[RMDB]
The record gives the reactivity of an RNA of 177 nucleotides to 2A3 and DMS. Reactivities are given for positions 27 through 126. 2A3 adducts were read by reverse transcription with SuperScript II with manganese.
RNA sequence: GGGAACGACUCGAGUAGAGUCGAAAAUACCUGUCUUGUAAUGCAGUGACUUGUAUAGUCCAGAGGUGGGCUGAGAGAAAAUGCCAUCCUAGGAAACAGGGUUAUUCUUCUUGUGGGUAACUCUGUGUAUAGAUCUCCCUUUCGAGGGAGAUCUAUAAAAAGAAACAACAACAACAAC
Reactivity to 2A3 in 0.01 (KOAc 150mM, MgCl2 10mM, bicine 150mM(pH8.5), 24C), signal-to-noise 3, nucleotides 027 to 126: u120a010c000c010u010g040u040c050u050u100g040u130a090a080u160g050c020a050g050u010g090a030c010u070u060g060u110a110u090a090g070u000c020c030a020g040a030g100g060u080g010g030g000c030u050g010a000g000a000g000a050a030a090a110u110g020c030c000a040u020c030c030u040a060g000g170a100a090a000c000a000g000g010g010u010u020a000u030u000c030u120u030c050u070u220g120u140g060g050g000u000a000a000c010u000c000u000g000u010g000
Reactivity to DMS in 0.01 (KOAc 150mM, MgCl2 10mM, bicine 150mM(pH8.5), 24C), signal-to-noise 3, nucleotides 027 to 126: u020a060c010c000u000g000u000c050u000u000g010u010a110a110u020g010c040a030g020u010g010a090c030u010u000g020u010a060u020a070g020u010c000c020a060g010a120g000g010u000g000g010g000c000u000g000a140g000a110g010a060a100a060a080u010g000c050c010a090u000c020c040u020a130g010g000a100a130a030c010a000g010g000g000u000u000a000u000u010c010u020u020c250u030u030g020u020g000g000g000u000a000a020c000u000c000u000g020u000g010